Description:
Source: RMDB library OK2TRN, as collected in RNAgym. An RNA of 177 nucleotides, treated with 2A3 and DMS and read out base by base. For DMS the reverse transcriptase was MarathonRT. The RNA was probed in 150 mM KOAc, 10 mM MgCl2 and 150 mM bicine (pH 8.5) at 24 C. The DMS profile rests on 9,827 reads.
RNA sequence: GGGAACGACUCGAGUAGAGUCGAAAAGGCGGACCGUGAUGAGGGCGUCCUGGUCGUUCGGUGAGCGCGGGAUCUCGUCGAGGCCACGCGGCACGAACGGGAUCGCGAAACCCGCGGCCUCGUCGAGGCCGCGAGCGAUUUUCGAAUCGCUCGCGGCAAAAGAAACAACAACAACAAC
Reactivity to 2A3 in 0.01 (KOAc 150mM, MgCl2 10mM, bicine 150mM(pH8.5), 24C), signal-to-noise 5, nucleotides 027 to 126: g040g010c010g030g030a100c020c020g060u080g040a120u100g020a100g040g060g010c020g030u040c000c030u040g060g040u070c030g040u080u070c030g010g060u060g050a090g080c030g000c020g010g010g030a050u020c000u000c010g050u020c030g020a180g020g010c010c020a080c100g110c120g010g000c050a020c060g020a130a010c020g030g030g020a090u110c050g000c010g080a070a030a020c010c010c020g000c000g020g040c010c010u040c010g010u000c010g050a030g100
Reactivity to DMS in 0.01 (KOAc 150mM, MgCl2 10mM, bicine 150mM(pH8.5), 24C), signal-to-noise 6, nucleotides 027 to 126: g010g010c040g000g010a070c040c040g010u010g010a070u010g010a090g010g010g010c080g020u000c030c030u000g010g020u000c040g020u000u010c040g030g010u000g010a090g000c060g000c030g000g010g000a060u000c010u000c030g000u000c020g020a100g020g010c000c000a090c190g010c200g010g010c050a070c030g000a080a040c030g010g010g000a050u010c030g010c060g000a050a120a110c120c010c060g040c070g010g020c090c010u010c040g020u000c020g020a090g020